[RMDB]
Structure probing data (DMS and 2A3) for a 177-nucleotide construct. 2A3 adducts were read by reverse transcription with SuperScript II with manganese. For DMS, 3,554 sequencing reads were counted. DMS adducts were read by reverse transcription with MarathonRT. Conditions: 150 mM KOAc, 10 mM MgCl2 and 150 mM bicine (pH 8.5), 24 C.

RNA sequence: GGGAACGACUCGAGUAGAGUCGAAAAUCGUCCUCCGCGUCGUCUUCGACCUCUUCGUCGGUGGCAGAGGUGGGCGUGGGUGCUGGUGGUAAGAGGCCCGGCUCGGUGUCGAGCACAGACCAGGAGCAUCAUACGGUACCUUCGGGUACCGUAUGAUAAAAGAAACAACAACAACAAC
Reactivity to DMS in 0.01 (KOAc 150mM, MgCl2 10mM, bicine 150mM(pH8.5), 24C), signal-to-noise 3, nucleotides 027 to 126: u010c040g010u010c010c010u010c010c010g020c100g020u000c100g000u000c010u010u010c020g010a070c080c160u010c160u000u000c190g020u000c060g010g010u000g010g020c040a050g010a120g000g020u000g000g000g010c030g020u000g000g010g000u000g000c040u010g000g010u000g000g000u000a080a100g010a120g010g000c040c020c050g010g000c000u000c090g000g000u010g010u000c020g000a040g000c020a140c040a080g000a070c010c030a090g000g000a090g000c100
Reactivity to 2A3 in 0.01 (KOAc 150mM, MgCl2 10mM, bicine 150mM(pH8.5), 24C), signal-to-noise 2, nucleotides 027 to 126: u050c000g000u010c000c000u010c000c020g070c060g080u060c000g000u000c040u080u040c070g040a050c030c020u130c160u300u170c080g080u010c040g010g070u040g020g000c040a040g020a090g100g050u030g000g000g010c020g020u010g000g040g010u060g010c000u030g010g070u040g020g040u100a150a070g030a140g120g000c000c010c000g060g000c020u000c120g190g100u290g070u150c020g020a010g040c040a030c030a070g040a010c020c010a110g100g010a030g010c020